Description
The record gives the reactivity of an RNA of 177 nucleotides to 2A3 and DMS. For DMS the reverse transcriptase was MarathonRT. 2A3 adducts were read by reverse transcription with SuperScript II with manganese. The 2A3 profile rests on 2,152 reads.
[RMDB]
RNA sequence: GGGAACGACUCGAGUAGAGUCGAAAAGCGAUGCGUUAGUUACCGACUACUCAUCUGUCAUGUUCGACUUCGGUGUAUUAAAGCGUCCGCAAAUUUUCUAUGCAUAUGACUUAGAUAAAUAUGGCGAACUAUGCCGAAUCUUCGGAUUCGGCAUAGUAAAAGAAACAACAACAACAAC
Reactivity to 2A3 in 0.01 (KOAc 150mM, MgCl2 10mM, bicine 150mM(pH8.5), 24C), signal-to-noise 5, nucleotides 027 to 126: g020c030g000a000u040g010c030g030u050u040a010g010u010u050a050c020c020g030a020c020u060a050c010u030c030a130u040c070u150g150u090c040a090u210g110u170u180c060g050a050c040u030u010c000g000g050u070g020u010a140u050u100a100a070a010g010c010g050u070c110c040g000c050a110a120a000u060u040u010u010c020u060a060u080g010c020a090u060a040u170g120a260c050u080u090a080g010a030u060a140a090a030u080a040u050g090g070c000g000a010
Reactivity to DMS in 0.01 (KOAc 150mM, MgCl2 10mM, bicine 150mM(pH8.5), 24C), signal-to-noise 2, nucleotides 027 to 126: g000c040g000a010u000g020c070g000u010u000a000g000u000u000a110c040c000g010a140c180u010a170c160u020c090a020u010c070u030g000u000c190a020u020g010u040u000c120g010a040c080u010u000c000g050g010u040g020u010a070u020u000a030a040a050g010c010g000u000c070c090g190c130a000a090a100u000u020u000u000c010u020a030u030g000c000a120u010a060u040g000a070c120u000u020a030g000a030u020a040a070a100u000a060u000g000g000c020g010a150